[RMDB]
RNA sequence: GGGAACGACUCGAGUAGAGUCGAAAACGCGGCCCGCGCCUGAAUGCGCGCCAGGUCUUCGAUCACGCUCAGCGCGAAGCCUUUGAAAUCCAGCUUGCCGGUCGUCGCGAACUUGGCAACGGCGCUCAGAAAGGAUGAUAUUCGUAUCAUCCUUUCUAAAAGAAACAACAACAACAAC
Reactivity to DMS in 0.01 (KOAc 150mM, MgCl2 10mM, bicine 150mM(pH8.5), 24C), signal-to-noise 9, nucleotides 027 to 126: c080g010c120g010g000c020c060c040g020c080g010c050c070u000g010a100a090u000g010c050g010c080g000c060c060a050g010g020u000c030u000u000c060g000a090u010c090a130c080g000c020u000c070a080g010c040g010c030g000a080a110g010c030c030u010u010u000g010a060a110a120u010c060c060a120g000c080u000u000g000c020c030g010g000u000c030g010u000c080g010c070g000a060a040c040u000u000g040g010c010a060a110c110g010g010c060g010c080u000c120
Reactivity to 2A3 in 0.01 (KOAc 150mM, MgCl2 10mM, bicine 150mM(pH8.5), 24C), signal-to-noise 9, nucleotides 027 to 126: c040g020c040g050g030c010c020c010g010c020g010c010c030u250g150a290a100u220g050c030g000c000g010c040c010a020g010g030u030c000u060u060c080g070a080u090c040a010c100g030c020u090c090a050g020c020g000c020g090a040a020g000c020c000u100u080u160g170a120a100a030u060c040c010a020g040c060u030u060g030c010c010g050g020u050c010g030u050c010g010c020g050a060a040c020u160u240g010g000c020a010a010c020g030g000c030g000c030u070c030